[RMDB]
RNA sequence: GGGAACGACUCGAGUAGAGUCGAAAAUAAAAGGGGGCGAGAUGUCAUGUCUCUCAAGCCUAGGAGACACUAGACACUCUGGACUAUCGGUUAGAGGAAACCCCCCCAAAAAUGUAUAGGCGAAAAAGUUACAAUCAAAGUUCGCUUUGAUUGUAACAAAAGAAACAACAACAACAAC
Reactivity to 2A3 in 0.01 (KOAc 150mM, MgCl2 10mM, bicine 150mM(pH8.5), 24C), signal-to-noise 1, nucleotides 027 to 126: u090a020a070a020a050g000g000g000g000g000c020g000a040g000a030u050g010u000c000a000u030g010u000c000u020c010u000c050a060a030g020c010c000u000a010g000g010a000g000a000c010a010c050u070a050g000a000c000a010c020u030c020u020g070g020a010c020u060a080u220c020g030g010u030u030a030g020a040g090g060a020a000a040c030c020c000c000c000c010c030a100a140a020a010a000u040g040u020a090u010a060g000g000c000g000a090a070a000a020a000
Reactivity to DMS in 0.01 (KOAc 150mM, MgCl2 10mM, bicine 150mM(pH8.5), 24C), signal-to-noise 3, nucleotides 027 to 126: u000a030a060a140a150g020g000g010g010g040c070g020a080g030a140u000g010u010c010a150u000g000u000c000u010c000u000c050a020a260g010c020c000u000a000g020g000a010g000a030c000a030c300u020a090g020a000c000a120c010u000c010u010g070g030a070c060u000a060u010c140g000g000u010u000a040g010a040g020g010a090a170a110c030c010c000c010c000c010c000a010a060a100a090a030u010g010u010a020u000a000g000g010c000g020a090a050a050a090a080